[RMDB]
RNA sequence: GGGAACGACUCGAGUAGAGUCGAAAAGCAAUUAGUGCCGUAUACUUUAAAGCAAAAUGGUUGACGCCAUUCGAAAAGGAAUUUACCAGUGAUUAUCCCUUUUACGUAUCUCCGACGGAAAUGGUAGAUGUAAGUAUGAUGUCUAUGUACGGCAAGGCAUUUGCGUCAAAUUCGUUUGACGCAAAUGAAAAGAAACAACAACAACAAC
Reactivity to DMS in 0.01 (KOAc 150mM, MgCl2 10mM, bicine 150mM(pH8.5), 24C), signal-to-noise 5, nucleotides 027 to 156: g020c060a060a140u000u010a120g020u000g010c010c010g050u000a040u000a060c090u000u010u000a070a090a170g020c060a060a060a070a070u000g030g040u010u010g020a180c180g020c010c000a090u000u000c040g000a060a050a070a080g000g000a010a010u010u000u000a050c040c020a200g010u000g020a170u000u010a110u000c010c010c020u000u000u000u010a140c090g030u000a100u000c030u010c060c010g030a130c030g010g020a080a070a060u000g030g010u010a060g000a050u000g000u010a070a090g040u000a080u000g010a090u010g020u000c030u010a070u010g010u000a010c030g020g010c020a050a100g010g010
Reactivity to 2A3 in 0.01 (KOAc 150mM, MgCl2 10mM, bicine 150mM(pH8.5), 24C), signal-to-noise 6, nucleotides 027 to 156: g060c030a040a110u120u040a100g100u020g020c020c010g000u020a030u060a090c090u080u100u200a100a080a030g060c040a060a040a040a050u070g040g010u050u100g070a040c080g000c020c000a010u040u040c050g080a040a060a020a000g060g030a040a030u030u050u090a120c030c040a040g030u020g120a060u020u130a050u100c000c000c000u020u080u010u060a030c040g020u030a040u050c060u010c040c040g050a030c030g010g080a030a050a040u090g010g020u040a030g000a050u040g030u100a040a060g020u030a060u130g120a040u100g030u020c040u050a040u070g010u000a000c000g000g010c000a000a010g040g000
This 207-nucleotide RNA was probed chemically with DMS and 2A3. The data come from the RNA Mapping Database (RMDB), library OK3TST.